[RMDB]
RNA sequence: GGGAACGACUCGAGUAGAGUCGAAAACAUGCAGCGGUUGUCCAUCAACUACACCGUGGGUGCGUCUGGGCGCGGCCGGGAGCCCAAGGGAGAGCUGCUGAUCGCCAACUUCGAUAUCUGACCCUAUGAUGGAGCCUUGGCAACUGCGUCAUAAAUAGUACUCAAAGCAGUUCGCUGCUUUGAGUACAAAAGAAACAACAACAACAAC
Reactivity to 2A3 in 0.01 (KOAc 150mM, MgCl2 10mM, bicine 150mM(pH8.5), 24C), signal-to-noise 3, nucleotides 027 to 156: c060a050u200g000c030a010g020c020g010g070u030u040g040u130c140c040a090u110c020a050a020c050u070a040c080a020c030c040g040u050g020g020g000u140g030c050g070u020c040u110g020g000g040c100g030c020g090g010c020c010g000g000g040a040g040c000c010c010a040a060g060g000g000a120g020a050g040c010u040g020c000u020g050a060u120c040g000c030c030a050a060c010u130u130c010g030a030u020a090u180c030u010g110a100c000c010c020u020a020u090g030a000u030g020g050a000g000c040c060u060u120g030g000c010a010a050c050u030g010c020g040u090c040a000u120a100a050a060u190a020